The record gives the reactivity of an RNA of 207 nucleotides to 2A3 and DMS. It was measured as part of the RMDB library M2RFPK. Conditions: 150 mM KOAc, 10 mM MgCl2 and 150 mM bicine (pH 8.5), 24 C. The 2A3 profile rests on 1,545 reads. For 2A3 the reverse transcriptase was SuperScript II with manganese.
[RMDB]
RNA sequence: GGGAACGACUCGAGUAGAGUCGAAAAGUCCAAAAUUGAUUCGGCGGCCCUGUCAUGAGGCCGAAACGAAGGCACGUACCCCUUCGAAUGGCGUCGGGGUGUCAGCGGCUAUAUAUGCGCCUAAUGCUAAAGUCGUGCUGGUUCGCCAGCACGACAACACUUUCCACUAGUUCGCUAGUGGAAAGUGAAAAGAAACAACAACAACAAC
Reactivity to 2A3 in 0.01 (KOAc 150mM, MgCl2 10mM, bicine 150mM(pH8.5), 24C), signal-to-noise 3, nucleotides 027 to 156: g050u010c010c010a050a030a040a060u170u140g050a080u100u030c030g010g000c000g010g010c080c000c000u050g090u100c120a150u210g050a030g110g000c040c020g000a020a010a000c020g010a020a030g030g020c100a010c160g110u140a080c000c000c000c050u000u010c030g050a110a210u200g070g020c020g080u040c040g010g000g000g030u000g030u010c020a010g020c020g060g000c100u020a030u040a030u000a020u280g080c040g010c020c040u070a120a040u150g050c080u160a220a040a050g010u000c000g010u000g010c000u000g010g010u050u020c110g010c080c000a000g000c000a000c000g000a000c000a000a000
Reactivity to DMS in 0.01 (KOAc 150mM, MgCl2 10mM, bicine 150mM(pH8.5), 24C), signal-to-noise 1, nucleotides 027 to 156: g020u010c010c000a040a100a130a140u010u000g010a210u010u000c060g010g030c020g020g010c040c000c020u000g050u020c180a200u000g010a050g000g000c030c010g030a000a060a100c040g040a090a060g020g000c040a050c090g000u030a090c130c030c000c030u000u000c010g040a170a180u010g010g010c040g040u010c120g010g000g020g000u000g010u010c000a140g000c090g010g000c020u030a150u000a170u000a100u000g040c010g030c040c050u010a040a070u000g000c030u000a070a100a140g010u000c000g030u010g000c000u010g010g000u000u000c300g010c010c010a030g000c020a040c000g020a010c000a050a080